[RMDB]
This 177-nucleotide RNA was probed chemically with DMS and 2A3. It was measured as part of the RMDB library TTRDEL. The RNA was probed in 150 mM KOAc, 10 mM MgCl2 and 150 mM bicine (pH 8.5) at 24 C. Values cover nucleotides 27 to 126. For DMS, 1,898 sequencing reads were counted. For 2A3, 2,222 sequencing reads were counted.
RNA sequence: GGGAACGACUCGAGUAGAGUCGAAAAGAUAUGGAUAUGGAGCGAGGUGGUACGUUGAAAUCGGAAACGAUGGAGUACCACUCGCCAAUCAUAUCCUAAGUCAAAGGACUCUCUUCGGAGAGUCCAACUUAGCAAGGGAGUUCGCUCCCUUGCUAAGAAAAGAAACAACAACAACAAC
Reactivity to DMS in 0.01 (KOAc 150mM, MgCl2 10mM, bicine 150mM(pH8.5), 24C), signal-to-noise 2, nucleotides 027 to 126: g020a050u000a300u000g000g010a020u000a010u000g010g020a170g020c000g010a060g030g040u000g010g020u010a000c000g000u000u020g000a110a100a030u000c010g020g000a120a100a100c010g000a020u000g000g010a060g010u010a000c020c000a010c000u000c000g000c000c020a050a060u000c000a000u000a000u000c000c000u000a060a130g020u000c040a070a110a120g010g000a020c010u000c000u000c000u000u020c170g000g000a010g000a030g000u000c000c000a020a020
Reactivity to 2A3 in 0.01 (KOAc 150mM, MgCl2 10mM, bicine 150mM(pH8.5), 24C), signal-to-noise 1, nucleotides 027 to 126: g050a050u090a040u220g000g000a000u000a030u030g010g030a100g010c020g000a030g170g250u110g000g010u000a000c010g170u290u010g050a020a040a000u000c020g000g020a020a060a010c020g000a020u050g030g010a030g000u000a010c000c010a000c010u010c000g030c000c000a000a040u120c010a000u010a000u070c000c000u000a130a020g070u040c090a000a030a250g000g000a000c000u040c000u000c000u070u120c300g010g020a000g030a010g010u010c000c000a000a000